[RMDB]
RNA sequence: GGGAACGACUCGAGUAGAGUCGAAAAAAACUGCGUCCUAGAGGAGGUUACCAACUUUCCUAAAGUCAUACAGCUACCAGGUGGAAGACUGUUUGUUGGACUCAACUCUGUCUUAUGCCAGAGCAUCUCUUGUUAGCCACUACUCUCUGCUGCCUCACCUGCCUAAUCCAUUCGUGGAUUAGGCAGGAAAAGAAACAACAACAACAAC
Reactivity to 2A3 in 0.01 (KOAc 150mM, MgCl2 10mM, bicine 150mM(pH8.5), 24C), signal-to-noise 1, nucleotides 027 to 156: a010a010a010c100u050g010c000g110u080c000c020u050a010g030a000g090g000a010g040g000u070u170a080c000c000a030a030c140u130u060u070c030c020u100a000a110a040g000u060c030a010u060a230c010a060g010c040u140a100c050c040a070g000g000u010g030g100a010a070g030a070c060u000g100u130u040u010g070u020u060g080g040a120c030u000c130a000a060c000u050c000u060g060u000c040u030u190a030u100g020c000c030a070g010a000g010c040a040u030c010u040c000u090u080g040u180u090a030g010c010c000a080c030u040a060c000u000c000u000c010u020g020c000u000g080c000c000u040c010a060